Chemical mapping of a 207-nucleotide RNA with DMS and 2A3. The 2A3 profile rests on 1,838 reads. For DMS the reverse transcriptase was MarathonRT. The DMS profile rests on 1,688 reads. It was measured as part of the RMDB library M2RFPK.

[RMDB]
RNA sequence: GGGAACGACUCGAGUAGAGUCGAAAAUAAGCACCUCGUUAGGUGAGGCGGCUACACGAACAUAGGCCACUGACCCCCAACGUCGAGAGACGCCCCGGGUCAGGACAGCUCUUCCCGGCUUAAGGGUAAAAUCACAACGUCUUCGGACGUUGUGAAACUCAUAUUUCCGAUUCGUCGGAAAUAUGAGAAAAGAAACAACAACAACAAC
Reactivity to DMS in 0.01 (KOAc 150mM, MgCl2 10mM, bicine 150mM(pH8.5), 24C), signal-to-noise 1, nucleotides 027 to 156: u000a080a070g050c040a080c010c000u000c000g000u000u020a110g030g010u000g010a090g020g000c010g020g000c060u000a120c080a170c110g010a070a090c100a160u000a050g000g040c030c030a120c000u000g010a140c020c030c010c000c000a100a040c010g000u010c000g010a300g000a300g000a050c010g030c020c200c120c110g000g010g020u000c000a050g060g000a070c070a150g010c000u000c020u000u000c010c030c000g000g010c020u000u010a120a140g020g010g030u010a030a030a110a130u000c010a000c000a000a000c000g020u020c010u000u000c240g040g000a000c000g020u010u010g040u020g000a000a010a040
Reactivity to 2A3 in 0.01 (KOAc 150mM, MgCl2 10mM, bicine 150mM(pH8.5), 24C), signal-to-noise 3, nucleotides 027 to 156: u160a040a030g020c000a010c030c000u010c010g150u120u300a150g020g120u150g030a000g010g050c100g050g000c010u070a050c110a020c120g210a220a000c050a200u180a100g180g000c040c020a020c020u000g010a010c010c000c000c040c030a030a000c010g000u000c000g010a020g000a010g010a160c000g050c010c000c020c010g010g010g000u000c000a010g000g010a010c050a020g000c000u000c000u050u030c000c000c000g050g000c040u120u130a050a050g030g010g030u060a070a060a020a090u020c000a000c000a000a000c000g000u000c010u020u060c120g100g000a000c000g000u000u000g000u000g000a000a000a000